[RMDB]
Source information:
The data come from the RNA Mapping Database (RMDB), libraries RFM100 and RFMREP. This 177-nucleotide RNA was probed chemically with 2A3 and DMS. DMS adducts were read by reverse transcription with MarathonRT. The RNA was probed in 150 mM KOAc, 10 mM MgCl2 and 150 mM bicine (pH 8.5) at 24 C.
RNA sequence: GGGAACGACUCGAGUAGAGUCGAAAAGCUGGAGCAGGUCCCAAGGGUACGGCUGUUCGCCGUUUAAAGCGGUACGCGAGCUGGGUUCAGAACGUCGUGAGACAGUUCGGUCCCUAUCCUCCGCGGGGAGUCCUGGAAAAUUCGUUUUCCAGGACUCAAAAGAAACAACAACAACAAC
Reactivity to 2A3 in 0.01 (KOAc 150mM, MgCl2 10mM, bicine 150mM(pH8.5), 24C), signal-to-noise 5, nucleotides 027 to 126: g030c050u070g020g020a040g010c080a040g080g080u030c010c000c010a040a060g080g000g010u070a020c010g010g000c000u020g080u090u080c100g000c020c040g000u010u010u080a080a060a020g010c000g030g010u110a060c060g030c050g040a030g050c040u060g020g120g050u130u150c040a050g010a030a010c010g020u010c000g060u090g070a060g010a040c040a050g020u050u190c010g010g040u030c020c000c000u010a030u020c010c010u000c000c010g000c010g030g010g040
Reactivity to DMS in 0.01 (KOAc 150mM, MgCl2 10mM, bicine 150mM(pH8.5), 24C), signal-to-noise 2, nucleotides 027 to 126: g000c030u020g020g010a030g000c110a050g030g000u000c000c010c020a100a090g000g020g010u010a080c020g020g010c020u010g000u000u010c120g000c010c010g000u010u010u040a040a120a170g010c000g010g000u010a140c040g010c030g000a010g030c140u000g000g030g010u030u010c030a040g010a000a010c000g010u000c000g010u050g020a220g000a010c020a040g000u000u010c010g000g000u000c010c000c010u000a050u000c100c010u010c030c030g030c010g000g020g000